[RMDB]
RNA sequence: GGGAACGACUCGAGUAGAGUCGAAAAGAGCUCGACCAUGCAGGUUAGAUAUGGGAAGAGCUAUAAUUUACUCUAAGUCAGUUAAUGUGCUUCGAGAAGCACGUUACUGACUUUAGGGCUACCUGCAACUGACUUACCGGUUCGCCGGUAAGUCAGUAAAAGAAACAACAACAACAAC
Reactivity to 2A3 in 0.01 (KOAc 150mM, MgCl2 10mM, bicine 150mM(pH8.5), 24C), signal-to-noise 2, nucleotides 027 to 126: g080a010g000c000u010c000g050a030c000c000a000u020g000c000a020g000g070u110u170a010g030a080u160a090u160g020g010g000a240a000g010a000g020c000u000a000u000a030a000u020u030u120a030c000u000c000u000a000a000g000u000c000a030g020u140u210a000a000u000g000u000g030c000u000u040c150g270a200g070a060a000g000c020a000c020g000u000u000a000c000u000g000a000c000u000u000u000a000g000g000g000c000u080a080c000c000u000g000c000a000
Reactivity to DMS in 0.01 (KOAc 150mM, MgCl2 10mM, bicine 150mM(pH8.5), 24C), signal-to-noise 1, nucleotides 027 to 126: g000a010g000c000u000c000g020a300c040c000a110u010g040c040a070g000g000u040u070a040g010a280u050a010u000g030g020g030a130a220g000a000g010c000u000a020u020a010a060u020u050u050a220c000u010c000u000a000a000g030u000c000a000g010u000u010a000a000u010g030u000g000c010u000u020c130g000a250g010a040a010g000c010a010c000g030u000u000a000c020u000g000a000c000u000u000u000a000g030g000g000c090u030a000c000c010u010g000c020a190
The record gives the reactivity of an RNA of 177 nucleotides to 2A3 and DMS.
The RNA was probed in 150 mM KOAc, 10 mM MgCl2 and 150 mM bicine (pH 8.5) at 24 C.
Values cover nucleotides 27 to 126.
DMS adducts were read by reverse transcription with MarathonRT.